The data come from the RNA Mapping Database (RMDB), library OK3TST. Structure probing data (2A3 and DMS) for a 207-nucleotide construct. Values cover nucleotides 27 to 156. The 2A3 profile rests on 1,097 reads. 2A3 is a SHAPE reagent: it acylates the 2'-hydroxyl of flexible nucleotides of all four kinds.
RNA sequence: GGGAACGACUCGAGUAGAGUCGAAAAGUUUUCUUUAUUGGGGUUGCGGACAUAUCAUAACGAAGAGGUAUCGUAAUUGAAGAGGUUUGGAAAGACCCACCACAGAAGGUAAUAGUCCUGUAUGUUAAACGAGAAGACUUUAGAUAUGAUCCAGAGAAUUUACUAAUAUCUUCGGAUAUUAGUAAAUAAAAGAAACAACAACAACAAC
Reactivity to 2A3 in 0.01 (KOAc 150mM, MgCl2 10mM, bicine 150mM(pH8.5), 24C), signal-to-noise 2, nucleotides 027 to 156: g030u060u100u060u040c030u090u230u220a300u160u130g060g000g020g000u080u110g080c050g000g040a000c000a000u000a010u030c030a070u100a200a040c130g010a020a010g010a020g020g050u020a010u020c000g000u010a000a040u010u010g000a000a020g090a170g000g000u000u000u020g000g020a000a000a000g000a000c010c000c000a000c000c000a000c000a050g040a050a000g000g000u030a010a010u000a020g000u000c000c000u000g010u010a000u020g030u000u070a260a240a040c020g020a000g000a030a000g020a010c000u080u030u040a020g010a000u040a000u000g140a170u000c000c010a000g020a010g010a100
Reactivity to DMS in 0.01 (KOAc 150mM, MgCl2 10mM, bicine 150mM(pH8.5), 24C), signal-to-noise 2, nucleotides 027 to 156: g010u020u000u000u010c030u010u000u000a160u000u000g020g010g020g020u000u000g010c030g040g000a200c030a040u010a070u000c000a100u010a020a190c080g000a090a130g000a090g020g020u000a080u010c010g070u000a060a100u000u010g010a050a020g010a300g000g000u000u000u010g020g060a300a080a020g000a010c020c000c010a030c020c010a130c100a130g020a090a060g000g000u000a040a070u000a200g030u000c000c010u010g020u010a130u010g010u000u000a000a090a060c030g010a080g020a110a120g010a060c000u000u010u000a090g010a140u010a030u000g000a070u000c040c040a240g020a190g010a120